[RMDB]
RNA sequence: GGGAACGACUCGAGUAGAGUCGAAAAGAUAUGGACAGCAGCCUUGGAUUUAUAGCUAUCUCGGAAACGAGCCGAGGCUAUUGUCAGGCUUCCCUGUCCUAAGUCAAAAUCGGCGUUCGCGCCGAAACGUAGCUAAUUGGUUCGCCAAUUAGCUACGAAAAGAAACAACAACAACAAC
Reactivity to 2A3 in 0.01 (KOAc 150mM, MgCl2 10mM, bicine 150mM(pH8.5), 24C), signal-to-noise 5, nucleotides 027 to 126: g030a010u110a050u170g000g000a010c000a020g200c090a010g010c080c020u100u230g190g050a100u210u300u050a030u080a010g010c020u060a100u300c010u000c000g020g060a230a300a190c120g030a100g080c040c040g120a070g040g000c000u010a000u000u010g020u020c000a010g000g000c000u050u060c030c010c010u010g000u000c000c000u020a100a040g050u010c030a010a010a020a270u020c000g010g000c010g030u090u100c300g000c010g000c100c020g000a010a000a000
Reactivity to DMS in 0.01 (KOAc 150mM, MgCl2 10mM, bicine 150mM(pH8.5), 24C), signal-to-noise 5, nucleotides 027 to 126: g000a030u000a300u010g010g010a020c010a010g070c210a020g010c010c010u010u010g020g020a040u000u020u000a010u000a010g000c010u010a200u000c010u000c000g010g000a080a100a120c100g010a050g010c240c090g010a120g010g000c000u000a010u000u010g010u010c000a040g010g000c020u000u010c140c180c000u000g000u000c000c000u000a040a080g010u010c030a090a060a110a120u000c000g010g000c010g010u000u010c220g030c010g030c000c000g000a000a030a090